An RNA of 177 nucleotides, treated with 2A3 and DMS and read out base by base. Conditions: 150 mM KOAc, 10 mM MgCl2 and 150 mM bicine (pH 8.5), 24 C. DMS adducts were read by reverse transcription with MarathonRT. For 2A3 the reverse transcriptase was SuperScript II with manganese. The data come from the RNA Mapping Database (RMDB), library TTRDES. For DMS, 1,942 sequencing reads were counted.
RNA sequence: GGGAACGACUCGAGUAGAGUCGAAAAGAUAUGGAAUCCAUACCAGGCAACAGCUACGGGUCGGAAACGACCCAGUAGACAUGCCUGAUGGAUUCCUAAGUCAAAGCACAUUGUUCGCAAUGUGCAAGUUAAGGGUUACCUUCGGGUAACCCUUAACAAAAGAAACAACAACAACAAC
Reactivity to 2A3 in 0.01 (KOAc 150mM, MgCl2 10mM, bicine 150mM(pH8.5), 24C), signal-to-noise 1, nucleotides 027 to 126: g000a000u040a010u010g020g000a000a000u020c010c010a040u070a220c190c100a010g020g000c130a300a060c090a300g000c020u010a000c010g060g010g010u000c010g000g020a040a010a020c000g040a000c150c000c010a010g000u000a000g040a000c010a240u300g010c020c000u000g020a010u000g000g000a000u010u030c000c010u000a000a000g010u000c020a100a120a110g000c000a000c000a000u010u030g040u110u220c300g030c120a000a000u000g000u010g020c010a010a020
Reactivity to DMS in 0.01 (KOAc 150mM, MgCl2 10mM, bicine 150mM(pH8.5), 24C), signal-to-noise 2, nucleotides 027 to 126: g010a010u000a090u000g000g020a010a000u000c000c000a020u000a160c300c050a020g000g020c000a120a080c240a130g000c010u000a010c020g010g000g020u000c000g020g030a020a020a060c020g020a020c000c000c000a020g020u000a000g000a010c060a300u010g030c000c010u000g010a030u000g000g020a020u000u010c000c010u010a000a060g000u000c010a120a130a170g010c010a010c000a010u000u000g000u000u040c300g030c010a000a000u000g010u000g020c020a010a030